Conditions: 150 mM KOAc, 10 mM MgCl2 and 150 mM bicine (pH 8.5), 24 C. The record gives the reactivity of an RNA of 170 nucleotides to 2A3 and DMS. For 2A3, 119,449 sequencing reads were counted. For DMS the reverse transcriptase was MarathonRT. Values cover nucleotides 27 to 129.
[RMDB]
RNA sequence: GGGAACGACUCGAGUAGAGUCGAAAACCCAACCGGCGGGCCGGCUGCUCUUCUUUCCCUUCUCUCGUCUUCCUCGGUCAACCUCUUGAGUUCCCCUUCUUCCUCCUCGCUGAGGCGCUUCCCUCCUACCCUCUGAUCUUCGGAUCAGAGAAAAGAAACAACAACAACAAC
Reactivity to 2A3 in 0.01 (KOAc 150mM, MgCl2 10mM, bicine 150mM(pH8.5), 24C), signal-to-noise 9, nucleotides 027 to 129: c000c000c000a010a050c030c010g060g000c010g010g020g020c010c010g030g010c020u050g020c010u020c020u080u020c010u030u060u050c010c010c010u060u030c030u000c010u010c020g050u010c020u090u040c010c000u020c010g020g010u050c030a050a090c010c010u050c020u060u110g050a040g040u040u040c000c000c000c000u040u030c000u040u010c010c010u020c000c000u020c010g040c050u040g020a030g020g010c010g010c020u010u010c010c000c000u020c010c000u050a130c020c000
Reactivity to DMS in 0.01 (KOAc 150mM, MgCl2 10mM, bicine 150mM(pH8.5), 24C), signal-to-noise 9, nucleotides 027 to 129: c000c000c000a140a090c120c070g010g020c050g000g020g020c050c030g000g010c110u020g030c030u030c040u020u010c030u020u020u020c020c010c010u000u000c040u020c020u020c040g000u010c030u020u020c040c000u000c030g000g020u030c090a090a150c080c010u000c040u010u030g010a140g010u010u010c000c000c020c080u020u020c040u010u000c020c000u000c030c020u010c020g040c050u010g000a140g010g000c050g000c100u020u020c020c010c010u000c040c000u020a110c100c030